[RMDB]
RNA sequence: GGGAACGACUCGAGUAGAGUCGAAAAGAUAUGGAUUCGUUUACAUGGAGAGAAGCGCGAUAAGAUCUGGUUCGGAAACGAACCUGAUCUUUUGACGCGUGGUCUCCAUGUAAACGAAUCCUAAGUCCCUCGAUAUGAAGUUCGCUUCAUAUCGAGGAAAAGAAACAACAACAACAAC
Reactivity to DMS in 0.01 (KOAc 150mM, MgCl2 10mM, bicine 150mM(pH8.5), 24C), signal-to-noise 1, nucleotides 027 to 126: g020a130u000a260u000g000g000a010u000u010c000g010u000u000u000a000c000a000u000g050g010a010g020a020g000a300a300g000c010g040c010g020a200u010a010a000g020a010u000c000u000g000g000u000u000c020g010g000a100a040a200c010g000a000a000c000c010u000g000a000u000c000u000u000u020u000g020a230c080g010c000g020u000g010g000u010c000u000c010c000a000u000g020u000a000a000a000c000g000a000a000u000c020c010u000a050a090g000u020c020